[RMDB]
RNA sequence: GGGAACGACUCGAGUAGAGUCGAAAAGGCAACGCGAUGCGUUCGAGCGUCCGUUUAUAUGCGUGUAUAUGCACUCUGAUCUGGCUCCGCAGAUUGGUUGACGUAUUCGAGUGCGCGCUAACACAAGAAUCAAAAUCGGUUUCGACCGAUUUUGAUUAAAAGAAACAACAACAACAAC
Reactivity to DMS in 0.01 (KOAc 150mM, MgCl2 10mM, bicine 150mM(pH8.5), 24C), signal-to-noise 3, nucleotides 027 to 126: g020g000c070a070a060c040g010c070g000a030u000g000c060g020u020u010c040g000a070g020c000g000u000c020c220g000u020u000u030a030u000a070u030g020c110g010u010g020u010a050u040a060u050g000c040a120c070u040c030u000g010a050u010c040u000g020g010c060u020c050c040g030c040a020g010a020u000u010g000g040u020u000g010a100c010g040u000a100u040u010c060g010a020g010u010g000c030g000c080g000c010u010a130a100c100a090c170a100a070g010
Reactivity to 2A3 in 0.01 (KOAc 150mM, MgCl2 10mM, bicine 150mM(pH8.5), 24C), signal-to-noise 7, nucleotides 027 to 126: g140g010c050a050a010c060g050c040g090a140u100g010c010g040u080u060c050g030a020g000c000g010u020c020c030g030u000u210u080a250u070a060u130g070c060g070u050g090u050a050u050a030u300g020c020a010c030u020c010u030g010a040u010c010u030g050g020c060u030c140c080g010c020a000g010a080u030u050g040g020u070u080g030a030c000g010u020a210u030u100c040g020a020g030u010g000c010g000c000g000c020u100a190a010c070a000c030a080a110g100
Structure probing data (DMS and 2A3) for a 177-nucleotide construct. It was measured as part of the RMDB library OK1LIB. The reactions ran in a buffer of 150 mM KOAc, 10 mM MgCl2 and 150 mM bicine (pH 8.5), at 24 C.